[RMDB]
RNA sequence: GGGAACGACUCGAGUAGAGUCGAAAAAUUGAAGUUCUAGAAGCAACCAUAGAAGAUAUCAUGUGGGAUUUGGAUUGUUUUCGAACUGUCGAAGAUUUACAGCACCACAAGCGAGUGAGCUUACUGGACCUAACCACCCCUUCGGGGGUGGUUAGGUAAAAGAAACAACAACAACAAC
Reactivity to 2A3 in 0.01 (KOAc 150mM, MgCl2 10mM, bicine 150mM(pH8.5), 24C), signal-to-noise 1, nucleotides 027 to 126: a000u080u300g000a000a000g000u000u000c000u070a000g000a030a000g000c000a010a000c000c000a040u230a130g110a160a040g030a060u270a000u060c100a110u090g070u140g060g110g000a080u070u000u000g100g000a100u000u070g030u130u110u000u000c060g010a040a090c000u120g300u100c110g030a040a040g060a060u000u000u140a040c000a000g000c060a070c010c000a010c040a030a100g030c010g000a100g040u070g000a010g000c000u030u030a180c030u000g000g060
Reactivity to DMS in 0.01 (KOAc 150mM, MgCl2 10mM, bicine 150mM(pH8.5), 24C), signal-to-noise 1, nucleotides 027 to 126: a020u040u010g000a010a090g010u000u000c000u010a190g050a020a000g050c000a020a050c060c000a010u040a080g000a190a070g000a030u040a020u000c050a090u020g020u000g000g000g020a080u010u020u000g000g020a120u000u000g050u010u000u010u010c220g010a050a050c050u020g000u000c050g000a020a050g000a090u000u000u040a100c150a070g050c300a020c030c000a020c050a020a030g050c050g010a190g000u010g050a120g000c030u020u000a020c040u010g000g000
The record gives the reactivity of an RNA of 177 nucleotides to 2A3 and DMS. The RNA was probed in 150 mM KOAc, 10 mM MgCl2 and 150 mM bicine (pH 8.5) at 24 C. Source: RMDB library OK1LIB, as collected in RNAgym.